Chemical mapping of a 207-nucleotide RNA with 2A3 and DMS.

RNA sequence: GGGAACGACUCGAGUAGAGUCGAAAAUCCUAAGUCACUGCAUGGAGGUGCAUCGAUCUUGUCAGCAUGUCGGAAACGACAUGCUUGGAUUUAGGGAGCACCUUCUGUGAUGGUGAUAUGGAAAAGCGGGAUCAUAAGUUCGCUUAUGAUCCCGCAACAAACCUAUUUGCUUCGGCAAAUAGGUUUGAAAAGAAACAACAACAACAAC
Reactivity to 2A3 in 0.01 (KOAc 150mM, MgCl2 10mM, bicine 150mM(pH8.5), 24C), signal-to-noise 2, nucleotides 027 to 156: u040c010c010u060a110a010g010u000c000a000c010u000g000c010a020u030g000g010a010g000g030u000g020c020a300u110c010g050a040u060c040u040u050g050u090c000a000g030c020a010u000g000u020c000g010g050a050a070a080c010g000a000c000a000u000g060c010u020u070g030g000a010u090u120u110a050g030g000g000a040g030c000a030c000c000u040u000c000u000g010u010g040a220u010g000g000u010g010a010u020a080u110g150g050a080a120a040a050g010c020g000g010g000a000u000c000a000u000a000a000g000u060u100c150g080c230u010u000a000u000g000a000u000c010c000c000g000c000a000a000
Reactivity to DMS in 0.01 (KOAc 150mM, MgCl2 10mM, bicine 150mM(pH8.5), 24C), signal-to-noise 1, nucleotides 027 to 156: u000c000c000u010a120a290g010u010c010a020c020u010g010c000a070u000g010g040a020g030g050u000g030c000a150u000c110g020a130u010c030u010u000g020u000c060a050g000c000a000u010g000u010c000g000g000a220a150a300c000g030a010c000a000u000g000c000u000u020g010g010a010u040u000u010a060g040g000g030a140g020c010a020c010c000u010u000c010u010g020u000g000a110u000g000g000u000g000a090u010a280u010g000g000a070a070a130a110g050c010g010g020g060a040u000c030a010u020a010a040g010u000u000c300g020c020u000u000a030u000g000a020u010c020c000c000g030c000a000a000
For 2A3, 1,460 sequencing reads were counted. The RNA was probed in 150 mM KOAc, 10 mM MgCl2 and 150 mM bicine (pH 8.5) at 24 C. Reactivities are given for positions 27 through 156. Source: RMDB library RNAMAK, as collected in RNAgym. High DMS reactivity at an A or C suggests that its Watson-Crick edge is free.